[RMDB]
Chemical mapping of a 177-nucleotide RNA with DMS. For DMS, 1,274 sequencing reads were counted.
RNA sequence: GGGAACGACUCGAGUAGAGUCGAAAAGAUAUGGAUGAAUUUCAUGACAUGAUACGGAUCGGAAACGAUCCGAAUAUCAACAGCAUGGUUCAUCCUAAGUCAAAAGUUGACGGUUCGCCGUCAACAAUCACAUGACUGACUUCGGUCAGUCAUGUGAAAAAGAAACAACAACAACAAC
Reactivity to DMS in 0.01 (KOAc 150mM, MgCl2 10mM, bicine 150mM(pH8.5), 24C), signal-to-noise 1, nucleotides 027 to 126: g000a030u000a060u040g000g000a000u000g000a010a020u000u000u000c000a000u000g030a120c120a260u030g010a010u000a110c000g010g000a010u000c010g030g020a010a010a090c020g020a020u000c000c010g000a030a060u010a050u000c010a110a110c220a160g000c010a030u000g000g020u000u000c000a010u000c000c000u000a000a060g000u010c020a060a120a140a210g000u000u000g000a020c000g000g000u000u000c300g050c000c000g000u010c000a010a000c000a130a120
Source: RMDB library TTRDES, as collected in RNAgym.